[RMDB]
Description: An RNA of 177 nucleotides, treated with DMS and 2A3 and read out base by base. The DMS profile rests on 2,395 reads.
RNA sequence: GGGAACGACUCGAGUAGAGUCGAAAAGAUAUGGACGUGUGAUGCUUUUGACGCAUUCUCGGAAACGAGAUGCGAUAAGCAUACACGUCCUAAGUCAAACCGGUGAGGGCUUCGGCCCUCACCGGAAUCACUUUUAUUCGUUCGCGAAUAAAAGUGAAAAAGAAACAACAACAACAAC
Reactivity to DMS in 0.01 (KOAc 150mM, MgCl2 10mM, bicine 150mM(pH8.5), 24C), signal-to-noise 2, nucleotides 027 to 126: g000a020u010a230u000g000g000a010c000g030u010g020u000g000a020u000g020c010u010u000u000u030g020a300c030g000c010a010u010u010c010u020c000g000g000a080a030a120c010g000a000g000a010u000g020c000g000a050u000a020a040g020c000a010u000a030c000a000c000g000u000c000c000u000a010a040g010u010c010a080a150a140c010c010g010g000u010g000a020g000g010g010c010u000u010c260g030g010c010c010c000u000c000a010c000c000g010g000a010a010
Reactivity to 2A3 in 0.01 (KOAc 150mM, MgCl2 10mM, bicine 150mM(pH8.5), 24C), signal-to-noise 2, nucleotides 027 to 126: g010a010u030a020u120g010g000a000c000g010u000g040u090g240a050u010g030c040u100u210u280u300g100a060c000g000c000a030u300u000c000u000c010g000g000a040a020a030c010g000a000g000a010u000g010c000g010a040u090a160a040g010c010a000u010a000c000a000c010g000u000c000c000u000a000a000g020u000c010a030a000a090c010c010g040g000u000g000a020g070g000g000c070u110u170c300g140g000c000c000c010u000c000a000c020c010g010g000a000a000

Record summary: For 2A3, 4,085 sequencing reads were counted. Values cover nucleotides 27 to 126. The RNA was probed in 150 mM KOAc, 10 mM MgCl2 and 150 mM bicine (pH 8.5) at 24 C.